The data come from the RNA Mapping Database (RMDB), library M2RFPK. An RNA of 207 nucleotides, treated with DMS and 2A3 and read out base by base. For 2A3 the reverse transcriptase was SuperScript II with manganese. The 2A3 profile rests on 3,525 reads. Conditions: 150 mM KOAc, 10 mM MgCl2 and 150 mM bicine (pH 8.5), 24 C. DMS adducts were read by reverse transcription with MarathonRT.

[RMDB]
RNA sequence: GGGAACGACUCGAGUAGAGUCGAAAAGUAGACUGUAUCAUGUCAGUAAGCAUGCCGGGGAAUGGUGGUUUACCCCGUUAUCAAAUGAUUACCGACCAAUAAUUGGCGAAACUCGUUUCGCGUUGGCAAAGUCACGGCGUGUUCGCACGCCGUGAAAUACACACUAAACGUUCGCGUUUAGUGUGUAAAAAGAAACAACAACAACAAC
Reactivity to DMS in 0.01 (KOAc 150mM, MgCl2 10mM, bicine 150mM(pH8.5), 24C), signal-to-noise 2, nucleotides 027 to 156: g020u000a090g020a120c020u010g000u010a300u020c010a040u010g010u030c030a050g000u010a060a090g000c040a050u010g010c170c040g050g020g020g010a060a060u010g000g010u010g020g030u000u000u000a250c010c000c000c000g000u000u000a030u000c290a100a060a080u010g000a040u010u010a040c000c000g000a030c000c090a040a080u000a050a170u000u020g020g000c010g000a080a050a060c100u000c140g010u000u000u000c040g020c100g010u010u020g000g000c110a040a070a130g000u000c000a020c030g040g010c020g010u000g000u000u010c260g050c010a030c030g000c000c010g050u000g000a000a030a130
Reactivity to 2A3 in 0.01 (KOAc 150mM, MgCl2 10mM, bicine 150mM(pH8.5), 24C), signal-to-noise 4, nucleotides 027 to 156: g130u140a030g040a080c040u040g020u080a070u150c020a030u060g050u050c030a030g100u160a160a010g050c020a020u050g060c050c000g010g000g000g000a000a040u030g000g020u030g010g050u010u020u110a060c000c000c000c000g030u040u010a030u030c010a000a000a060u050g030a010u040u030a010c010c030g070a100c040c080a010a020u150a110a120u140u160g070g000c010g030a020a020a030c060u060c120g070u000u020u010c010g000c010g020u000u010g010g040c060a120a020a030g040u010c000a010c000g000g020c000g010u040g000u020u030c090g020c080a000c000g000c010c010g000u000g000a000a000a000